[RMDB]
RNA sequence: GGGAACGACUCGAGUAGAGUCGAAAAAACUUGAUACAUACAGUACAGCACCUUGAAAACAAAUUAUCUGCUAGUUCAGUAUUUUCUACUUAUAAUCACUCCCUCCCAGGGCAUGUAAUUAAUUUACACACCAGGAGAAUUUCGAUUCUCCUGGUGUAAAAGAAACAACAACAACAAC
Reactivity to DMS in 0.01 (KOAc 150mM, MgCl2 10mM, bicine 150mM(pH8.5), 24C), signal-to-noise 2, nucleotides 027 to 126: a030a060c030u010u000g000a160u030a020c060a220u040a080c230a110g000u000a050c050a160g040c030a030c050c060u060u040g000a190a050a110a090c180a080a010a090u050u000a030u020c060u000g000c040u010a020g000u000u000c010a040g020u000a030u000u000u010u040c070u000a050c060u020u000a110u060a060a130u040c100a040c080u030c070c010c000u000c010c000c030a080g000g010g000c080a010u000g010u000a020a010u010u030a090a090u000u000u000a050c060
Reactivity to 2A3 in 0.01 (KOAc 150mM, MgCl2 10mM, bicine 150mM(pH8.5), 24C), signal-to-noise 3, nucleotides 027 to 126: a000a000c080u150u100g010a050u030a090c020a010u110a010c010a090g070u070a030c030a020g030c010a030c010c000u000u140g020a090a030a020a040c070a090a170a120u120u060a050u110c020u050g040c040u070a010g020u030u070c060a020g040u030a100u060u090u010u050c010u020a030c040u060u070a070u050a130a040u060c030a010c070u020c000c000c000u020c000c000c000a010g010g030g000c010a000u040g010u000a010a010u040u070a030a100u040u080u120a030c060

The record gives the reactivity of an RNA of 177 nucleotides to DMS and 2A3. For DMS, 1,525 sequencing reads were counted. For 2A3, 1,698 sequencing reads were counted. For DMS the reverse transcriptase was MarathonRT.